[RMDB]
RNA sequence: GGGAACGACUCGAGUAGAGUCGAAAAUGCCGUACCAGGUGAAGGUCGUUUGCAUCGACAAAUCUUCCCGUGCCUGCCAGCUCAGCGUUGAGUUCAACGUAUACUCCGGGAUGAUCGACAAACGGUCCUCUACCUGUACCUUCGGGUACAGGUAGAGAAAAGAAACAACAACAACAAC
Reactivity to 2A3 in 0.01 (KOAc 150mM, MgCl2 10mM, bicine 150mM(pH8.5), 24C), signal-to-noise 2, nucleotides 027 to 126: u020g040c000c000g020u000a030c010c020a000g060g000u030g070a120a060g000g020u020c010g000u000u010u020g040c070a110u030c020g000a010c110a040a200a050u040c020u070u040c000c000c020g020u070g070c000c030u080g030c020c040a070g030c030u050c070a050g030c030g080u020u050g070a150g080u230u220c040a080a010c030g020u060a040u030a110c020u040c040c020g000g020g000a020u030g030a050u000c010g000a010c020a010a010a000c030g010g000u020c000
Reactivity to DMS in 0.01 (KOAc 150mM, MgCl2 10mM, bicine 150mM(pH8.5), 24C), signal-to-noise 3, nucleotides 027 to 126: u010g020c010c000g010u000a220c030c020a160g010g030u010g010a100a090g020g000u000c020g010u000u000u000g010c170a130u000c010g000a080c150a090a130a070u000c070u000u000c000c010c010g000u000g030c060c030u000g010c110c100a050g000c080u000c090a040g010c060g010u010u000g000a180g010u010u010c080a030a030c040g010u000a120u010a120c090u010c120c030g000g010g000a040u000g020a050u000c010g010a080c020a030a030a040c030g010g010u000c020
Annotation: Source: RMDB library OK2TST, as collected in RNAgym. Chemical mapping of a 177-nucleotide RNA with 2A3 and DMS. High DMS reactivity at an A or C suggests that its Watson-Crick edge is free. 2A3 adducts were read by reverse transcription with SuperScript II with manganese. The DMS profile rests on 2,112 reads. The RNA was probed in 150 mM KOAc, 10 mM MgCl2 and 150 mM bicine (pH 8.5) at 24 C.